[RMDB]
RNA sequence: GGGAACGACUCGAGUAGAGUCGAAAACAUCGGAUCGCCUUUCAGUUCCACAUCCACUUCUUUGGCGAAGUCGAUGAUGUACUGCUUAAAGACGUGGGCCUGUGCCUUACUGGCGGAAAGGAAAAUCUGGUUACGUCCGGUCAGCAGGGCGUCAAUCAGUUAACCUAACCUUCGGGUUAGGUUAACUAAAAGAAACAACAACAACAAC
Reactivity to 2A3 in 0.01 (KOAc 150mM, MgCl2 10mM, bicine 150mM(pH8.5), 24C), signal-to-noise 4, nucleotides 027 to 156: c020a100u090c040g060g070a050u110c020g020c000c000u000u010u010c040a020g010u100u110c010c010a010c000a030u020c020c010a020c000u030u000c010u080u100u110g040g010c100g080a100a020g040u030c070g080a110u170g040a030u090g210u110a060c040u030g040c030u080u300a010a010a010g000a010c010g000u010g010g020g010c020c030u060g000u040g030c010c010u030u100a070c020u010g000g020c030g030g030a090a060a030g110g010a050a100a000a040u100c050u060g000g020u020u010a000c000g010u010c000c020g080g050u100c050a060g020c040a050g010g000g000c000g040u020c030a000a050u030c010
Reactivity to DMS in 0.01 (KOAc 150mM, MgCl2 10mM, bicine 150mM(pH8.5), 24C), signal-to-noise 2, nucleotides 027 to 156: c050a000u000c050g020g020a070u010c080g000c020c010u000u000u000c070a100g020u000u010c060c030a050c020a090u010c020c030a040c000u000u020c010u000u000u010g030g030c080g050a060a140g000u010c080g020a140u000g000a190u000g050u000a050c010u000g000c090u000u010a050a050a050g020a070c040g010u000g020g020g040c050c060u010g030u010g000c070c020u000u000a070c070u010g010g020c030g030g010a040a020a090g000g010a090a070a050a120u020c040u000g040g010u010u000a060c020g020u000c000c010g020g010u000c160a090g000c050a090g020g000g030c000g010u000c070a030a070u000c020
The record gives the reactivity of an RNA of 207 nucleotides to 2A3 and DMS. Source: RMDB library OK3TST, as collected in RNAgym. Reactivities are rounded to 0.1 and cut off at 0 and 3. Reactivities are given for positions 27 through 156. 2A3 adducts were read by reverse transcription with SuperScript II with manganese. DMS adducts were read by reverse transcription with MarathonRT. Conditions: 150 mM KOAc, 10 mM MgCl2 and 150 mM bicine (pH 8.5), 24 C.